[RMDB]
This 177-nucleotide RNA was probed chemically with 2A3 and DMS.
For 2A3 the reverse transcriptase was SuperScript II with manganese.
2A3 is a SHAPE reagent: it acylates the 2'-hydroxyl of flexible nucleotides of all four kinds.
For 2A3, 690 sequencing reads were counted.
The RNA was probed in 150 mM KOAc, 10 mM MgCl2 and 150 mM bicine (pH 8.5) at 24 C.
RNA sequence: GGGAACGACUCGAGUAGAGUCGAAAAGGUGAUUAUACCCAAGAAGAUUUGGAUAAGCAACGUGAAGAAGCAAUGAAAGAUUUCGAUAUGGAUAAAUGGGUAAAAACCGUAGAUUCAAUGAUGGCUGGACCAUCGUUAAGUUCGCUUAACGAUGGUCAAAAGAAACAACAACAACAAC
Reactivity to 2A3 in 0.01 (KOAc 150mM, MgCl2 10mM, bicine 150mM(pH8.5), 24C), signal-to-noise 1, nucleotides 027 to 126: g010g000u010g000a060u030u110a060u080a230c000c000c000a000a000g060a120a000g000a070u120u050u080g050g030a050u080a120a050g010c030a060a000c050g070u110g050a150a070g020a020a000g070c000a060a000u150g050a160a030a000g030a040u070u040u000c030g020a030u050a120u200g050g000a000u010a120a190a020u060g000g000g000u000a090a000a000a000a000c000c000g000u000a020g020a090u010u080c030a060a060u160g040a020u050g080g060c060u040g100
Reactivity to DMS in 0.01 (KOAc 150mM, MgCl2 10mM, bicine 150mM(pH8.5), 24C), signal-to-noise 2, nucleotides 027 to 126: g030g010u010g010a140u000u000a130u000a030c000c010c010a090a150g000a130a130g000a080u000u000u000g030g010a100u010a070a070g000c040a050a120c060g000u000g010a070a150g000a060a200g000c100a070a040u010g010a110a080a110g010a080u000u000u010c030g020a150u020a090u000g000g020a050u010a030a090a070u000g010g000g000u000a040a020a110a090a070c010c010g080u010a050g000a040u000u000c020a060a060u010g010a000u010g000g010c090u010g010